[RMDB]
This 207-nucleotide RNA was probed chemically with 2A3.
RNA sequence: GGGAACGACUCGAGUAGAGUCGAAAAUCCACUAUGAAUCUAGUCACUAAAUAAACACAAUUAGCUACUGUGUGUAAUAGUGAGUGUUGAUAACACAAAAUAAUAGUAUAGUCUUGGAAGAUUAUACGCGCCCUUGCUCCGUUCGCGGAGCAAGGAAGCUGUAAGGUCUGUUCGCAGACCUUACAGCAAAAGAAACAACAACAACAAC
Reactivity to 2A3 in 0.01 (KOAc 150mM, MgCl2 10mM, bicine 150mM(pH8.5), 24C), signal-to-noise 2, nucleotides 027 to 156: u030c020c000a040c060u150a150u300g120a140a050u010c130u120a070g100u060c000a000c000u010a010a060a060u020a030a000a000c000a000c000a020a100u150u100a170g130c100u240a100c020u030g000u010g000u000g010u020a010a010u000a040g000u010g020a010g010u020g030u030u000g060a110u280a300a030c040a010c000a020a150a010a120u300a050a090u100a120g000u000a010u010a000g000u000c020u010u140g120g130a160a050g000a070u020u000a000u000a000c000g020c010g040c020c000c010u000u000g000c000u000c000c000g000u020u010c100g040c000g110g000a000g100c000a000a000g010g000a010a000
The RNA was probed in 150 mM KOAc, 10 mM MgCl2 and 150 mM bicine (pH 8.5) at 24 C.
Source: RMDB library M2RFPK, as collected in RNAgym.